[RMDB]
RNA sequence: GGGAACGACUCGAGUAGAGUCGAAAACGGCGGGGAGUCAGUGAUAAAGAGGCGAGGAAUUUCGGAAAAACUCUCCCAAGAAGAAGCAAGAGAAUUCAGGAAAGAGGAGAUUUCCCCAUAACGCUGGCAAUAGGGUAUGCUUCGGCAUACCCUAUUGAAAAGAAACAACAACAACAAC
Reactivity to DMS in 0.01 (KOAc 150mM, MgCl2 10mM, bicine 150mM(pH8.5), 24C), signal-to-noise 1, nucleotides 027 to 126: c040g000g020c030g000g010g030g010a020g000u020c070a000g010u010g000a090u020a060a090a120g000a140g020g010c110g000a050g000g030a090a080u000u010u020c030g000g020a060a050a020a090a130c060u010c040u000c020c040c030a070a090g000a090a060g000a060a050g010c110a050a050g020a130g000a050a110u010u000c060a090g000g010a050a070a080g010a060g000g000a080g010a090u010u000u000c000c000c010c090a080u010a080a030c170g020c060u010g000g010
Background: The record gives the reactivity of an RNA of 177 nucleotides to DMS.